An RNA of 207 nucleotides, treated with DMS and 2A3 and read out base by base. For 2A3 the reverse transcriptase was SuperScript II with manganese. High 2A3 reactivity points to a flexible backbone, as in loops and unpaired stretches.
[RMDB]
RNA sequence: GGGAACGACUCGAGUAGAGUCGAAAACGCUGGGAUGUCAGUGAUAGGACAGGGAGCUGAAGCGCGCACGGCGAAGAACUGUCCUGUUUGCUGAUCAUCCUGUGCUGAAGCGCGCACGGCAACCGAAAGGUGCGGGACAGUCUCUUCGGAGACUGAAUUACCUUUGAUGAUUCGUCAUCAAAGGUAAAAAAGAAACAACAACAACAAC
Reactivity to DMS in 0.01 (KOAc 150mM, MgCl2 10mM, bicine 150mM(pH8.5), 24C), signal-to-noise 3, nucleotides 027 to 156: c050g040c030u010g010g010g030a010u000g020u000c010a000g020u010g010a080u000a010g010g010a040c000a030g000g030g020a140g010c020u000g010a050a070g040c010g030c020g030c030a300c060g000g000c020g000a060a130g000a100a300c010u020g000u010c000c000u000g030u000u000u010g020c010u000g030a050u000c040a010u000c000c010u010g010u000g010c030u010g010a100a040g010c050g000c040g060c000a250c080g020g020c040a070a180c040c030g000a110a170a190g000g020u000g040c020g000g020g000a190c000a010g010u000c000u000c010u000u010c300g040g010a030g000a010c000u000g000a070a120
Reactivity to 2A3 in 0.01 (KOAc 150mM, MgCl2 10mM, bicine 150mM(pH8.5), 24C), signal-to-noise 3, nucleotides 027 to 156: c040g020c010u030g010g000g000a000u000g020u030c000a010g010u050g160a060u060a030g000g000a000c000a000g020g000g010a010g000c010u040g020a220a040g020c010g000c020g000c020a010c020g010g010c020g100a190a000g020a020a010c000u010g010u000c010c030u020g030u010u090u200g000c000u000g000a040u050c010a010u000c000c000u010g020u040g000c020u050g020a140a040g000c000g000c000g000c000a010c020g020g000c030a040a060c020c010g020a040a040a020g000g000u020g000c000g020g010g040a020c010a000g010u010c000u000c000u020u110c230g100g000a000g000a000c000u000g000a000a020